[RMDB]
RNA sequence: GGGAACGACUCGAGUAGAGUCGAAAAAGCCACGCCGGUCAAGGUAUUGGCUCCAGCGGGUUUGAGGUUGCUGCUGUCAGUAUCAAAUGUGACAUUGUUGGGCAUAUUCAACACGAUAUUAUCGCCCUAGAUGGUGAACCUUCGGGUUCACCAUCUAAAAAGAAACAACAACAACAAC
Reactivity to DMS in 0.01 (KOAc 150mM, MgCl2 10mM, bicine 150mM(pH8.5), 24C), signal-to-noise 1, nucleotides 027 to 126: a100g000c020c020a090c110g030c050c080g000g020u000c120a060a090g000g000u000a110u000u000g000g000c000u000c100c090a100g040c050g020g000g000u020u000u020g010a080g030g010u000u000g020c030u000g020c090u000g000u000c020a000g000u000a030u020c050a030a120a100u010g030u000g020a060c070a110u010u000g010u000u000g010g000g000c020a080u000a050u010u010c070a020a050c200a140c200g000a040u020a070u000u000a090u000c060g020c040c000c020

Structure probing data (DMS) for a 177-nucleotide construct. Values cover nucleotides 27 to 126. The data come from the RNA Mapping Database (RMDB), library OK2TRN. Conditions: 150 mM KOAc, 10 mM MgCl2 and 150 mM bicine (pH 8.5), 24 C.